[RMDB]
RNA sequence: GGGAACGACUCGAGUAGAGUCGAAAAGAUAUGGAUCUGCGAAUGGCUAUGAAGUCAGAUCGGAAACGAUCUGAGUGGAGCCAAACAGAUCCUAAGUCAAACACUUCACUGUUCGCAGUGAAGUGAACCUAACAUUAAUGUUCGCAUUAAUGUUAGGAAAAGAAACAACAACAACAAC
Reactivity to 2A3 in 0.01 (KOAc 150mM, MgCl2 10mM, bicine 150mM(pH8.5), 24C), signal-to-noise 9, nucleotides 027 to 126: g000a000u010a000u040g000g000a000u010c010u020g030c090g180a300a300u250g010g000c030u080a240u300g000a010a010g030u010c000a000g000a010u000c000g000g000a010a000a000c000g000a000u000c000u000g010a000g050u090g030g020a000g000c000c000a030a050a010c000a000g000a000u000c000c000u000a000a000g000u000c000a010a130a040c010a000c010u000u000c000a000c000u010g080u100u110c300g020c130a000g000u000g000a000a000g000u000g000a010a020
Reactivity to DMS in 0.01 (KOAc 150mM, MgCl2 10mM, bicine 150mM(pH8.5), 24C), signal-to-noise 9, nucleotides 027 to 126: g000a010u000a020u010g000g000a010u000c000u000g010c090g010a130a280u010g010g010c010u000a300u010g000a090a170g000u000c000a000g000a010u000c000g010g000a010a010a020c000g010a010u000c000u000g000a020g010u000g010g000a010g020c000c000a040a150a120c010a010g000a010u000c000c000u000a000a050g000u000c000a150a090a190c010a010c000u000u000c000a000c000u000g000u000u010c220g020c000a000g000u000g000a010a010g010u000g000a030a070

Description:
Source: RMDB library TTRDEL, as collected in RNAgym. An RNA of 177 nucleotides, treated with 2A3 and DMS and read out base by base. The DMS profile rests on 29,664 reads.